Source: RMDB library OK2TST, as collected in RNAgym. Structure probing data (DMS) for a 177-nucleotide construct.

RNA sequence: GGGAACGACUCGAGUAGAGUCGAAAAGUCAAGAUAGUCUAGGGAUGGGCUCGUGUGCAUCUGGUGUUUGUACAUCUGCGUCACGUCAAUGCAAGAAACUUACCAACUUUAGCAGUUUGUCGUGUCAAAAUCGGAGCAGGUUCGCCUGCUCCGAUUUAAAAGAAACAACAACAACAAC
Reactivity to DMS in 0.01 (KOAc 150mM, MgCl2 10mM, bicine 150mM(pH8.5), 24C), signal-to-noise 1, nucleotides 027 to 126: g030u000c070a120a080g010a120u020a070g010u000c030u000a150g000g010g010a060u000g020g000g010c030u020c050g030u050g000u000g030c040a100u000c090u020g030g040u020g020u020u000u000g010u000a060c070a070u010c080u000g000c130g010u000c020a030c030g000u000c030a010a060u000g000c010a090a090g030a100a070a080c120u000u020a090c100c100a040a060c130u000u000u000a080g050c030a100g010u030u000u000g000u010c000g030u030g010u000c120a060
Source information:
For DMS the reverse transcriptase was MarathonRT. For DMS, 817 sequencing reads were counted.